Record summary: This 177-nucleotide RNA was probed chemically with DMS and 2A3. DMS adducts were read by reverse transcription with MarathonRT. For DMS, 559 sequencing reads were counted. The 2A3 profile rests on 1,435 reads. Values are in units of 0.01, from 0 to 300, in steps of 10.
RNA sequence: GGGAACGACUCGAGUAGAGUCGAAAACGUUCAGAAAUACUUGACCACGAGGGCUCCCCUAUAGUCUGCUUUGGCGGUGCGGCAGGCCCCGUGCGAUAGGCUAACUGCGGUAUUCCCCGCACUCCGUGGUAUAGGAUUUGUUCGCAAAUCCUAUACCAAAAGAAACAACAACAACAAC
Reactivity to DMS in 0.01 (KOAc 150mM, MgCl2 10mM, bicine 150mM(pH8.5), 24C), signal-to-noise 1, nucleotides 027 to 126: c060g000u010u010c040a030g010a110a200a140u000a060c020u000u000g000a290c300c020a030c030g000a040g060g020g020c000u000c080c300c020c000u030a010u010a110g010u030c000u030g000c000u000u040u030g030g020c010g000g030u010g000c300g040g000c110a130g000g000c050c000c010c000g010u000g060c020g010a070u000a030g000g000c110u030a130a160c040u000g000c000g030g000u000a170u000u000c000c010c000c130g010c100a070c040u000c050c030g000u000
Reactivity to 2A3 in 0.01 (KOAc 150mM, MgCl2 10mM, bicine 150mM(pH8.5), 24C), signal-to-noise 2, nucleotides 027 to 126: c040g020u150u120c070a040g070a080a160a070u220a070c010u010u010g000a010c000c010a010c030g020a300g050g000g010c010u130c000c050c000c010u040a050u110a100g220u050c060u020g050c040u110u060u170g170g010c010g000g000u030g010c040g000g000c050a090g040g000c000c000c000c000g000u000g040c010g010a010u020a020g000g040c000u040a100a060c020u030g010c000g010g000u020a120u000u050c050c010c010c000g000c000a100c000u000c020c020g070u010